RNA sequence: GGGAACGACUCGAGUAGAGUCGAAAAUUUUUGAAGAUGGGAGUGUGUCCUAUCACAGCCUCAGUGGUGUUGGGUUGGAAAAGGCUGGGAACCCCUGCCUUCCCAGGGCCACAUGCCCCUUUACUACCAAUAUUCCCGUCUUCGGACGGGAAUAUUGAAAAGAAACAACAACAACAAC
Reactivity to DMS in 0.01 (KOAc 150mM, MgCl2 10mM, bicine 150mM(pH8.5), 24C), signal-to-noise 2, nucleotides 027 to 126: u000u000u000u000u000g020a100a060g010a080u000g010g000g010a150g030u000g000u010g000u010c020c010u000a050u000c040a200c090a070g000c050c050u010c150a080g020u000g000g020u010g000u000u000g000g050g000u000u000g030g000a020a070a020a030g010g010c020u000g000g010g040a140a170c240c050c000c040u000g010c000c000u000u010c100c000c020a060g000g000g000c000c030a010c020a020u010g000c020c010c010c100u000u000u010a080c110u010a100c200
Reactivity to 2A3 in 0.01 (KOAc 150mM, MgCl2 10mM, bicine 150mM(pH8.5), 24C), signal-to-noise 1, nucleotides 027 to 126: u030u060u090u070u080g030a050a080g050a060u110g000g030g030a040g060u180g030u040g020u030c010c000u090a050u080c020a000c060a050g020c020c000u090c040a030g000u040g090g000u060g300u170u010g000g050g020u040u080g040g100a150a100a060a020g000g040c020u040g220g010g000a230a180c080c000c000c040u010g000c000c000u010u040c020c000c000a000g020g010g000c000c000a020c020a020u020g020c000c000c010c030u130u130u090a060c020u060a100c010